The record gives the reactivity of an RNA of 177 nucleotides to DMS and 2A3. Conditions: 150 mM KOAc, 10 mM MgCl2 and 150 mM bicine (pH 8.5), 24 C. For DMS the reverse transcriptase was MarathonRT.

RNA sequence: GGGAACGACUCGAGUAGAGUCGAAAAUCCGAUAUGUGCCCUGGAGCGCUCAAACUUCACCAUGCCAAUGAUGGUGCCAUUGGUCGUGUUCGCUUCCCAGGUGGUCGUGUUCGUGCAUCCCAAUGGGACGAAGUAAGUAGUUCGCUACUUACUUCGUAAAAGAAACAACAACAACAAC
Reactivity to DMS in 0.01 (KOAc 150mM, MgCl2 10mM, bicine 150mM(pH8.5), 24C), signal-to-noise 9, nucleotides 027 to 126: u000c030c010g010a100u000a040u000g010u010g000c050c010c030u010g010g000a070g000c050g010c220u010c100a070a090a100c110u010u000c040a050c060c060a050u010g010c050c080a040a060u010g000a100u000g010g010u010g010c130c070a040u000u000g000g010u000c130g020u000g000u010u010c050g020c080u000u000c080c020c030a100g010g010u000g020g010u000c030g010u000g010u000u000c040g010u000g000c110a110u010c020c010c020a090a110u010g010g010g010
Reactivity to 2A3 in 0.01 (KOAc 150mM, MgCl2 10mM, bicine 150mM(pH8.5), 24C), signal-to-noise 8, nucleotides 027 to 126: u000c010c000g000a030u050a060u200g100u080g040c020c010c030u040g040g020a040g030c030g010c020u050c100a140a150a060c040u110u080c030a020c040c010a050u130g070c030c020a120a050u140g040a040u070g060g050u050g060c030c010a050u040u040g040g000u060c060g020u030g020u090u050c020g000c040u070u050c010c010c010a020g020g070u060g030g000u050c020g010u020g040u060u050c030g020u060g050c010a070u070c000c000c030a040a070u190g030g020g060